[RMDB]
RNA sequence: GGGAACGACUCGAGUAGAGUCGAAAAGAUAUGGAUUAGCUACCCACCAAAGUGCGACGAAGAACAUCAAUUUAAUCGGAAACGAUUAAAUUGAUGGGAGUCGUGCUUUGAGGCUAAUCCUAAGUCACGUAGUGCUAUUCUUCGGAAUAGCACUACGAAAAGAAACAACAACAACAAC
Reactivity to 2A3 in 0.01 (KOAc 150mM, MgCl2 10mM, bicine 150mM(pH8.5), 24C), signal-to-noise 1, nucleotides 027 to 126: g090a020u240a210u300g000g010a040u020u010a010g000c040u100a270c030c010c060a030c010c000a010a000a020g080u030g000c030g000a010c030g210a300a150g090a130a020c000a000u000c010a000a000u010u000u080a020a020u010c000g000g020a040a090a020c000g040a010u010u010a070a020a000u000u000g000a000u010g020g010g020a020g000u020c010g010u010g000c000u010u000u030g000a000g000g020c000u040a030a000u000c000c000u000a090a000g280u300c240a010
Reactivity to DMS in 0.01 (KOAc 150mM, MgCl2 10mM, bicine 150mM(pH8.5), 24C), signal-to-noise 2, nucleotides 027 to 126: g000a120u020a190u000g000g000a000u000u000a000g000c010u000a200c040c010c040a300c240c020a010a000a000g020u010g010c010g030a010c000g020a110a130g000a170a110c010a000u010c000a020a000u000u000u000a000a010u000c000g000g000a110a100a240c000g020a020u000u000a000a000a010u000u000g000a000u000g000g000g000a100g000u000c000g070u000g000c010u000u000u000g000a090g030g000c010u000a000a020u000c000c000u000a020a080g000u020c080a210

Notes:
Chemical mapping of a 177-nucleotide RNA with 2A3 and DMS. DMS adducts were read by reverse transcription with MarathonRT.